[RMDB]
RNA sequence: GGGAACGACUCGAGUAGAGUCGAAAAUCGGGAUCAGCUUCUUGAGAAUCCGGUCGCGCUUGACGAGAUCGGCGCACGCCUUGUCCCAGUACGGCGGACGCGCGACCGUCUCGGCAUCGGAAAGCUACUCGUAUAGGCGGUUCGCCGCCUAUACGAGAAAAGAAACAACAACAACAAC
Reactivity to DMS in 0.01 (KOAc 150mM, MgCl2 10mM, bicine 150mM(pH8.5), 24C), signal-to-noise 1, nucleotides 027 to 126: u000c080g020g000g000a030u000c090a110g000c060u000u000c040u010u010g000a170g010a120a140u000c070c000g000g000u000c060g030c000g000c080u000u000g010a070c000g010a080g020a090u000c040g020g020c000g030c300a040c020g000c020c040u010u000g020u010c020c070c100a140g010u010a070c230g010g000c000g030g000a140c110g020c030g010c000g000a120c040c000g000u000c010u000c060g000g000c050a000u000c040g000g010a030a020a030g020c060u010a200
Reactivity to 2A3 in 0.01 (KOAc 150mM, MgCl2 10mM, bicine 150mM(pH8.5), 24C), signal-to-noise 1, nucleotides 027 to 126: u070c020g040g110g000a040u050c050a050g030c020u070u050c020u060u270g040a180g030a050a060u000c000c030g000g000u020c150g000c030g030c040u020u020g000a030c000g040a080g090a300u030c040g000g000c020g050c010a010c000g000c010c000u050u200g080u030c010c060c000a020g030u140a010c030g020g000c000g000g040a040c040g060c030g030c000g020a020c010c000g000u000c000u030c000g000g000c010a020u040c000g020g000a020a020a020g050c020u080a060
This 177-nucleotide RNA was probed chemically with DMS and 2A3. The DMS profile rests on 1,269 reads. DMS adducts were read by reverse transcription with MarathonRT. The 2A3 profile rests on 1,247 reads. It was measured as part of the RMDB library OK2TRN.